[RMDB]
RNA sequence: GGGAACGACUCGAGUAGAGUCGAAAAAAUGCCGCCUCAGUUGCAAGCUCUUUCGUGGCACUGUAAACAGUCCUAUUGAGUUAGGGGCAGUCAACCACGUUGCGAAGCUAAAUUAUCUGGUCGAGAGUUACGAUUCCCUACUUCGGUAGGGAAUCAAGCUAAUUUCCUUCUUCGGAAGGAAAUUAGCAAAAGAAACAACAACAACAAC
Reactivity to 2A3 in 0.01 (KOAc 150mM, MgCl2 10mM, bicine 150mM(pH8.5), 24C), signal-to-noise 3, nucleotides 027 to 156: a000a000u110g000c020c000g010c000c010u100c020a010g010u070u040g040c060a060a030g000c010u010c000u020u090u030c030g010u030g010g010c060a000c020u010g020u090a090a140a070c040a050g090u040c000c000u030a040u060u070g170a180g230u040u030a070g000g000g010g000c010a000g000u020c000a020a070c030c000a020c030g020u000u010g020c100g090a090a040g000c030u060a040a120a100u180u130a050u040c040u040g030g010u070c090g010a000g000a010g190u090u100a080c130g000a000u000u000c020c000c020u000a000c000u010u040c130g070g010u000a000g000g020g030a000a000u000c000a010a000
Reactivity to DMS in 0.01 (KOAc 150mM, MgCl2 10mM, bicine 150mM(pH8.5), 24C), signal-to-noise 2, nucleotides 027 to 156: a110a050u020g010c060c080g000c010c010u000c060a150g040u000u020g030c050a100a110g000c020u000c030u000u000u000c030g010u010g020g000c060a050c010u000g020u000a030a100a090c040a180g000u010c000c000u000a050u000u000g010a280g020u000u000a020g000g000g040g010c020a010g000u000c020a050a060c030c040a040c050g050u000u020g010c130g000a110a060g020c040u000a080a050a120u000u000a120u000c020u000g030g050u010c040g000a150g000a140g020u020u000a090c110g000a020u000u000c000c000c000u000a000c000u000u020c300g070g020u010a020g020g010g010a000a000u010c000a000a180